[RMDB]
RNA sequence: GGGAACGACUCGAGUAGAGUCGAAAAAAUCAUUUCUUUCGCUUGUUCAGUCAUUGUUUGCCUAUUUGAAUUCUGCCAGUAUUAAACCGUUUGGUAGCUUAACAGCGUAUCCGGUAACAGUUCGUUCGACAUACCACCAUUGAGGGGUAUCAUCGUCCAAUGUUAAUGGUUUCGACCAUUAACAUUGAAAAGAAACAACAACAACAAC
Reactivity to 2A3 in 0.01 (KOAc 150mM, MgCl2 10mM, bicine 150mM(pH8.5), 24C), signal-to-noise 5, nucleotides 027 to 156: a000a010u160c060a070u040u060u040c030u020u090u040c040g030c050u090u140g020u100u110c060a040g040u010c030a100u060u080g030u110u060u070g040c020c010u100a140u060u070u080g130a130a080u080u040c010u030g030c000c020a020g020u020a070u130u130a140a120a060c040c010g030u010u080u080g020g000u010a020g000c010u080u080a110a030c030a040g000c020g030u030a050u020c050c000g020g030u010a050a040c020a050g040u050u060c040g010u050u040c020g060a020c010a010u020a010c000c080a150c050c020a110u120u200g070a150g030g020g000g000u020a040u050c030a050u050c020g040u030c020
Reactivity to DMS in 0.01 (KOAc 150mM, MgCl2 10mM, bicine 150mM(pH8.5), 24C), signal-to-noise 4, nucleotides 027 to 156: a090a070u000c040a110u000u000u000c020u000u010u000c060g020c030u000u010g030u010u010c040a100g000u000c030a120u000u000g010u000u000u000g020c010c020u000a100u000u000u000g010a070a080u010u010c040u000g010c010c020a070g040u000a100u010u000a070a050a060c020c040g030u000u000u010g030g040u000a040g010c040u000u000a060a100c090a070g030c040g010u000a080u000c030c010g000g030u000a060a090c070a090g000u000u000c070g010u000u000c030g020a050c050a070u000a030c020c020a030c020c010a300u000u010g010a150g020g000g000g020u010a040u000c070a080u000c050g000u000c040

Description: The record gives the reactivity of an RNA of 207 nucleotides to 2A3 and DMS. For DMS the reverse transcriptase was MarathonRT. The 2A3 profile rests on 3,058 reads.